[RMDB]
RNA sequence: GGGAACGACUCGAGUAGAGUCGAAAACUACAAGAUACACAGCCGGGUUCUCCGGUGGAAGAGGAGUGCUGAGAAGAUCAAGCGUGAACUGGACAAAGGAAGCGAGGAGAGGUGGAAAAAUAGAUCGCCUCCUUCCUAGGUUCGCCUAGGAAGGAGGAAAAGAAACAACAACAACAAC
Reactivity to DMS in 0.01 (KOAc 150mM, MgCl2 10mM, bicine 150mM(pH8.5), 24C), signal-to-noise 2, nucleotides 027 to 126: c060u010a100c130a140a110g010a100u000a110c140a050c280a280g000c060c010g000g000g000u020u040c060u000c000c040g020g020u000g000g000a060a110g020a080g010g000a050g040u000g000c100u000g010a100g000a070a100g040a090u010c050a060a120g000c100g000u050g000a090a040c060u000g000g000a090c130a090a090a080g000g010a070a030g000c090g010a030g000g000a100g000a000g000g000u000g000g000a070a060a010a100a080u050a140g010a040u040c090g010
Reactivity to 2A3 in 0.01 (KOAc 150mM, MgCl2 10mM, bicine 150mM(pH8.5), 24C), signal-to-noise 1, nucleotides 027 to 126: c010u190a070c040a100a000g020a050u060a210c040a000c000a060g100c010c000g010g010g020u100u210c160u050c030c010g010g020u060g000g000a110a000g040a090g000g000a030g020u020g000c140u010g000a050g080a140a100g050a000u030c040a120a000g060c040g020u190g060a050a050c040u210g030g080a000c060a040a030a020g070g000a040a000g000c060g000a040g020g020a030g000a020g010g010u100g000g040a000a000a120a000a000u100a060g020a030u020c030g010
The record gives the reactivity of an RNA of 177 nucleotides to DMS and 2A3. DMS adducts were read by reverse transcription with MarathonRT. For DMS, 1,988 sequencing reads were counted. The RNA was probed in 150 mM KOAc, 10 mM MgCl2 and 150 mM bicine (pH 8.5) at 24 C. For 2A3 the reverse transcriptase was SuperScript II with manganese.